[RMDB]
RNA sequence: GGGAACGACUCGAGUAGAGUCGAAAAGAUAUGGAGCUAAUGCGACAUGAUCUCGAUCGGAAACGAUCGGUGAUCAACAGCGCAGGCUCCUAAGUCAAACCACACUAUCGUUCGCGAUAGUGUGGAAGUCAAUAUCUGUCUUCGGACAGAUAUUGACAAAAGAAACAACAACAACAAC
Reactivity to 2A3 in 0.01 (KOAc 150mM, MgCl2 10mM, bicine 150mM(pH8.5), 24C), signal-to-noise 3, nucleotides 027 to 126: g020a010u010a010u110g000g000a010g000c020u130a300a120u070g030c030g060a090c130a300u300g010a000u020c010u000c000g010a000u000c000g000g000a050a000a030c010g000a000u010c000g000g070u200g000a010u000c020a140a160c140a080g000c000g000c010a000g000g000c000u000c000c000u000a030a010g000u010c030a050a050a150c000c000a000c000a000c000u010a010u020c020g070u140u070c300g030c010g180a000u000a000g000u000g000u000g000g000a020a010
Reactivity to DMS in 0.01 (KOAc 150mM, MgCl2 10mM, bicine 150mM(pH8.5), 24C), signal-to-noise 3, nucleotides 027 to 126: g000a010u010a300u020g000g010a010g000c010u000a110a190u000g000c000g020a090c100a240u020g010a010u000c000u000c000g000a000u010c010g000g000a020a050a130c000g010a010u000c010g020g000u010g010a020u000c000a120a160c180a210g000c000g000c010a070g010g010c000u030c010c000u000a000a060g020u000c010a130a140a280c010c000a000c000a000c010u010a000u000c000g000u000u030c250g020c030g020a000u000a010g010u000g010u000g000g000a010a060
Structure probing data (2A3 and DMS) for a 177-nucleotide construct. For DMS the reverse transcriptase was MarathonRT. The data come from the RNA Mapping Database (RMDB), library TTRDES. DMS (dimethyl sulfate) methylates the pairing face of unpaired adenines and cytosines.